[RMDB]
RNA sequence: GGGAACGACUCGAGUAGAGUCGAAAACUAUUUAUAGACAGAACAGUGGAAAACGUAUAUCGCUAUAAACCUUAAACCCCGAAUCUUCCAGUCGUACCAUUCCACAUAGGCGAGGCAUAAGCGAAAGCCCUAGUACGAUCUUCGGAUCGUACUAGGGAAAAGAAACAACAACAACAAC
Reactivity to 2A3 in 0.01 (KOAc 150mM, MgCl2 10mM, bicine 150mM(pH8.5), 24C), signal-to-noise 4, nucleotides 027 to 126: c000u000a080u040u110u000a130u020a010g060a040c050a010g080a140a060c050a070g090u080g100g100a080a170a050a000c010g020u050a090u010a040u180c000g040c000u000a010u000a070a080a040c000c000u020u120a130a090a060c000c010c000c000g050a050a050u020c010u090u000c040c020a030g010u020c010g070u050a060c020c000a030u050u030c020c000a020c020a070u030a040g060g000c030g020a010g010g030c030a020u050a170a040g020c070g100a070a070a030g040
Reactivity to DMS in 0.01 (KOAc 150mM, MgCl2 10mM, bicine 150mM(pH8.5), 24C), signal-to-noise 2, nucleotides 027 to 126: c050u010a060u040u000u040a000u020a000g000a080c110a140g000a070a060c110a040g010u000g020g020a020a100a130a040c110g010u000a030u010a110u030c060g000c010u000a070u000a000a070a030c180c040u020u000a030a100a110c030c040c020c000g010a060a070u040c060u000u020c100c000a010g000u000c010g020u070a110c050c050a120u010u000c000c030a040c080a050u050a010g000g040c000g000a010g020g000c040a070u010a070a040g030c080g010a070a070a060g000
The record gives the reactivity of an RNA of 177 nucleotides to 2A3 and DMS. 2A3 adducts were read by reverse transcription with SuperScript II with manganese. It was measured as part of the RMDB library OK1LIB. The RNA was probed in 150 mM KOAc, 10 mM MgCl2 and 150 mM bicine (pH 8.5) at 24 C. Values cover nucleotides 27 to 126.